[RMDB]
RNA sequence: GGGAACGACUCGAGUAGAGUCGAAAAUAGAGCAAUCUCUAGCUGAAAUAGAUGAUGAAACAACCAUCGAAAUGGUAAGAGAUUCAGUGCAGCAGAUACAUGAUGUAGCCUAUAGAGGUCUAGAAGAUCAACGUACAAUGUUCGCAUUGUACGUUGAAAAAGAAACAACAACAACAAC
Reactivity to DMS in 0.01 (KOAc 150mM, MgCl2 10mM, bicine 150mM(pH8.5), 24C), signal-to-noise 5, nucleotides 027 to 126: u000a070g010a130g020c090a090a050u000c000u000c000u010a300g020c030u000g000a040a060a110u000a140g010a030u010g010a050u000g000a130a100a130c230a140a100c140c000a010u000c050g030a130a100a100u010g000g010u000a110a020g000a030g020a040u000u000c070a050g000u000g010c060a060g000c030a030g010a120u000a060c100a050u000g000a040u000g010u000a070g020c040c050u000a090u010a090g010a080g000g000u000c030u000a060g010a060a080g010a130
Reactivity to 2A3 in 0.01 (KOAc 150mM, MgCl2 10mM, bicine 150mM(pH8.5), 24C), signal-to-noise 3, nucleotides 027 to 126: u110a020g080a000g030c030a030a030u010c010u000c000u020a050g000c010u050g040a080a100a020u110a050g070a030u070g010a010u050g010a010a070a040c080a050a060c070c020a010u020c050g050a070a080a080u110g040g020u040a030a020g040a000g000a030u060u010c040a010g100u030g070c010a020g000c010a010g030a060u100a110c080a110u100g020a010u090g090u090a010g040c010c010u080a100u080a170g170a030g050g030u030c020u040a030g040a110a000g040a140